[RMDB]
RNA sequence: GGGAACGACUCGAGUAGAGUCGAAAACAGUAACGAUUUGGCACGAUGUCAGCUCACGGACAAGUGUACAAAUUUAAUUCACUUGUCCGAAUGCUCGAAUUUAAGACCUAGCAUUCGCUAGGUUUUUUAAUAAUUCGAUGUUCGCAUCGAAUUAUUAAAAAGAAACAACAACAACAAC
Reactivity to 2A3 in 0.01 (KOAc 150mM, MgCl2 10mM, bicine 150mM(pH8.5), 24C), signal-to-noise 3, nucleotides 027 to 126: c030a000g020u100a080a090c020g060a170u080u090u100g050g000c070a040c120g070a160u170g020u080c000a000g010c040u070c090a050c020g000g000a000c000a000a000g000u000g000u010a040c040a040a050a110u130u300u280a080a190u110u110c000a040c000u000u000g000u000c000c000g000a010a020u010g000c010u070c110g030a070a060u100u110u160a070a020g110a010c000c000u020a000g020c050a110u160u300c200g000c000u000a000g000g000u000u000u000u000u000
Reactivity to DMS in 0.01 (KOAc 150mM, MgCl2 10mM, bicine 150mM(pH8.5), 24C), signal-to-noise 5, nucleotides 027 to 126: c090a100g010u010a070a090c070g010a050u010u020u020g000g010c070a100c120g020a070u020g000u020c030a070g000c030u000c160a300c010g000g010a030c000a000a020g010u000g000u000a100c210a070a080a100u040u040u030a110a130u040u000c010a020c000u000u010g000u000c000c010g000a000a030u010g000c020u000c080g010a040a060u020u020u030a070a060g010a030c000c000u000a010g000c000a170u040u040c190g000c000u000a000g000g000u000u000u000u000u000